[RMDB]
RNA sequence: GGGAACGACUCGAGUAGAGUCGAAAAUUACAUAAGUCUAACACCUUGUUUCGGACUAACAAGGACGUAUGGAGGAUGGCCGAACCUCCAUAGUUAGACGUCCGAGAACCAGCCGAAAUGAAAAAGACAUUACUAGCGCUUUCGAGCGCUAGUAAUGAAAAGAAACAACAACAACAAC
Reactivity to 2A3 in 0.01 (KOAc 150mM, MgCl2 10mM, bicine 150mM(pH8.5), 24C), signal-to-noise 3, nucleotides 027 to 126: u100u040a070c050a050u180a200a010g060u040c030u020a080a000c020a040c090c010u030u020g030u010u040u040c150g130g030a210c030u020a040a010c040a040a090g000g020a020c030g120u040a000u010g010g000a000g000g000a030u140g060g000c010c000g030a070a060c020c000u000c000c010a000u000a000g000u000u050a100g040a060c010g000u000c020c010g090a070g040a060a040c030c010a010g050c000c040g030a030a050a040u130g060a010a010a110a020a020g050a010
Reactivity to DMS in 0.01 (KOAc 150mM, MgCl2 10mM, bicine 150mM(pH8.5), 24C), signal-to-noise 2, nucleotides 027 to 126: u000u020a110c110a150u030a070a050g000u010c010u000a030a040c120a120c050c060u000u000g000u000u000u010c040g000g010a110c090u040a060a080c030a020a210g000g000a010c070g050u000a010u000g050g000a020g000g000a120u020g030g000c030c060g010a180a120c000c000u000c000c000a020u000a010g010u010u060a060g010a300c020g020u000c000c010g000a250g000a090a120c160c250a080g020c000c040g000a000a050a020u030g000a000a050a010a060a090g020a160

Overview:
Source: RMDB library OK1LIB, as collected in RNAgym. The record gives the reactivity of an RNA of 177 nucleotides to 2A3 and DMS. Conditions: 150 mM KOAc, 10 mM MgCl2 and 150 mM bicine (pH 8.5), 24 C. DMS adducts were read by reverse transcription with MarathonRT.